[RMDB]
RNA sequence: GGGAACGACUCGAGUAGAGUCGAAAAAUGAGUGACCUCAGAUCACAACUCACUUCGAUCUAUCAGCAGCGUGGCGAGCUGACACCCCAGUCUGUCGUCGAUGAAGCUCGGCCCGACGAACACCCGUUGCAUCACCGUUUCGAAUGGGAUGACGCGGUCUGGCCAUGUAAUUCGUUACAUGGCCAGAAAAAGAAACAACAACAACAAC
Reactivity to 2A3 in 0.01 (KOAc 150mM, MgCl2 10mM, bicine 150mM(pH8.5), 24C), signal-to-noise 4, nucleotides 027 to 156: a010u190g020a040g010u040g040a070c000c080u190c130a060g020a190u080c020a080c030a070a150c010u060c030a040c050u110u090c040g060a070u000c020u090a070u080c040a040g010c000a030g010c020g100u080g020g020c000g000a010g050c030u030g030a060c020a050c050c030c000c010a020g110u050c080u100g110u030c020g010u030c020g050a040u130g070a110a020g010c040u010c000g120g000c010c010c000g020a070c030g020a050a010c020a090c040c000c000g020u040u290g020c010a000u000c010a100c120c010g050u050u090u180c160g080a100a050u110g040g000g000a010u010g030a030c000g020c000g000g000
Reactivity to DMS in 0.01 (KOAc 150mM, MgCl2 10mM, bicine 150mM(pH8.5), 24C), signal-to-noise 1, nucleotides 027 to 156: a070u020g000a090g010u010g020a110c050c030u010c090a240g000a080u000c080a050c030a280a120c010u000c010a020c020u000u000c020g000a120u000c080u000a190u000c000a090g010c020a050g020c000g030u010g030g020c000g020a030g000c050u010g010a080c100a050c010c020c010c050a160g000u000c060u010g000u010c080g020u000c080g010a070u010g020a210a210g000c050u000c080g010g020c030c000c100g000a100c060g000a100a010c020a020c040c000c080g020u000u000g010c010a120u000c030a090c050c020g030u020u010u000c040g000a200a170u020g000g010g000a080u000g000a020c120g010c020g030g010

The record gives the reactivity of an RNA of 207 nucleotides to 2A3 and DMS.
Conditions: 150 mM KOAc, 10 mM MgCl2 and 150 mM bicine (pH 8.5), 24 C.
It was measured as part of the RMDB library OK3TST.